[RMDB]
RNA sequence: GGGAACGACUCGAGUAGAGUCGAAAACCCACCAGAGCCUUCCACCUGGGGUUCCAUUCGUAUGAGUUUCAUGGACUUUCCCUACAGCUCUAUGACACUGAGUGCGGAGUGGAACCCCUAUGGAUAAAAGGCUAUUGGUUUUCGAACCAAUAGCCUUAAAAGAAACAACAACAACAAC
Reactivity to 2A3 in 0.01 (KOAc 150mM, MgCl2 10mM, bicine 150mM(pH8.5), 24C), signal-to-noise 2, nucleotides 027 to 126: c030c000c000a010c000c000a020g070a000g100c000c040u040u060c010c010a090c050c030u030g000g020g000g040u000u010c000c000a000u010u050c000g010u040a000u090g060a000g000u000u010u000c010a000u000g010g000a000c000u050u080u110c010c000c070u100a090c080a080g000c090u020c000u000a000u000g010a000c000a000c020u050g070a060g140u020g010c000g000g110a080g120u050g020g000a000a000c020c010c000c000u000a000u000g000g000a000u030a030a220
This 177-nucleotide RNA was probed chemically with 2A3. Values cover nucleotides 27 to 126. For 2A3 the reverse transcriptase was SuperScript II with manganese. Source: RMDB library RFM100, as collected in RNAgym. The RNA was probed in 150 mM KOAc, 10 mM MgCl2 and 150 mM bicine (pH 8.5) at 24 C.